Conditions: 150 mM KOAc, 10 mM MgCl2 and 150 mM bicine (pH 8.5), 24 C. An RNA of 177 nucleotides, treated with 2A3 and DMS and read out base by base. High DMS reactivity at an A or C suggests that its Watson-Crick edge is free. 2A3 adducts were read by reverse transcription with SuperScript II with manganese. It was measured as part of the RMDB libraries RFM100 and RFMREP. For DMS the reverse transcriptase was MarathonRT.

[RMDB]
RNA sequence: GGGAACGACUCGAGUAGAGUCGAAAAUGUGUUCAGUUUGAGGGAGGAUGAUAAAAUGGAACGGAGAUUGCAAGGAGACGUAGAAAAUAAAGUAGGAGCAAAUGGAUUUUCUGCUUGGCGGUAUAGCGGUAGAAAUAUUGUUCGCAAUAUUUCUACCAAAAGAAACAACAACAACAAC
Reactivity to 2A3 in 0.01 (KOAc 150mM, MgCl2 10mM, bicine 150mM(pH8.5), 24C), signal-to-noise 9, nucleotides 027 to 126: u140g070u010g010u030u040c020a030g010u040u090u120g070a070g000g030g010a040g030g000a040u060g010a010u110a070a090a040a060u110g020g000a020a010c040g020g000a030g020a050u050u100g010c030a040a050g030g000a030g020a020c050g020u050a020g090a060a060a020a030u170a040a080a020g060u080a030g010g060a030g020c030a030a030a110u090g040g020a040u070u030u020u010c010u010g030c010u020u040g040g000c040g000g040u060a060u060a110g070c070
Reactivity to DMS in 0.01 (KOAc 150mM, MgCl2 10mM, bicine 150mM(pH8.5), 24C), signal-to-noise 9, nucleotides 027 to 126: u020g020u010g010u010u010c050a080g010u000u000u010g010a100g000g000g000a070g000g000a060u000g000a090u010a030a040a080a070u020g000g010a050a060c110g010g010a070g000a070u010u000g010c070a060a060g000g010a050g010a050c120g010u010a060g000a070a040a050a050u020a050a050a090g010u010a050g000g000a050g020c070a040a060a080u010g000g010a090u010u000u000u000c030u000g000c050u000u010g010g010c060g010g000u010a050u010a080g010c210